Source: RMDB library OK1LIB, as collected in RNAgym. Structure probing data (2A3 and DMS) for a 177-nucleotide construct. DMS (dimethyl sulfate) methylates the pairing face of unpaired adenines and cytosines. For 2A3 the reverse transcriptase was SuperScript II with manganese. For DMS the reverse transcriptase was MarathonRT. The reactions ran in a buffer of 150 mM KOAc, 10 mM MgCl2 and 150 mM bicine (pH 8.5), at 24 C.
RNA sequence: GGGAACGACUCGAGUAGAGUCGAAAACAAGCUCCGUACAUCCUUUAAGCCCGCCGGAAUGAUGGAGAAACUUCAAAUGAACAGCGAGCUUUGCCGGGGAUUAGCUUGAAAUGUCUGGCACAAAAGGCAUCGCAUCCACGUUCGCGUGGAUGCGAUGAAAAGAAACAACAACAACAAC
Reactivity to 2A3 in 0.01 (KOAc 150mM, MgCl2 10mM, bicine 150mM(pH8.5), 24C), signal-to-noise 1, nucleotides 027 to 126: c020a010a000g090c000u020c030c000g020u100a050c000a120u020c000c000u090u120u170a040a040g000c000c020c020g000c030c010g040g020a020a000u020g010a040u110g020g000a040g040a110a000a000c050u070u130c030a160a000a180u030g010a110a010c000a120g000c000g020a000g000c000u020u170u000g000c000c000g000g000g000g000a010u030u030a020g190c170u130u020g030a060a010a010u230g190u070c060u000g000g000c010a000c000a090a140a000a000g080g000
Reactivity to DMS in 0.01 (KOAc 150mM, MgCl2 10mM, bicine 150mM(pH8.5), 24C), signal-to-noise 1, nucleotides 027 to 126: c070a130a000g000c000u000c110c000g000u120a060c170a090u000c040c010u030u000u040a040a040g000c000c020c010g000c000c000g000g010a030a070u000g000a220u040g000g000a150g000a140a160a120c080u000u000c000a070a210a050u030g040a300a080c220a080g040c000g000a000g000c050u000u000u020g000c070c040g000g000g000g000a020u000u000a040g000c070u000u000g040a040a130a060u040g000u000c010u000g020g030c120a170c040a010a020a120a050g000g000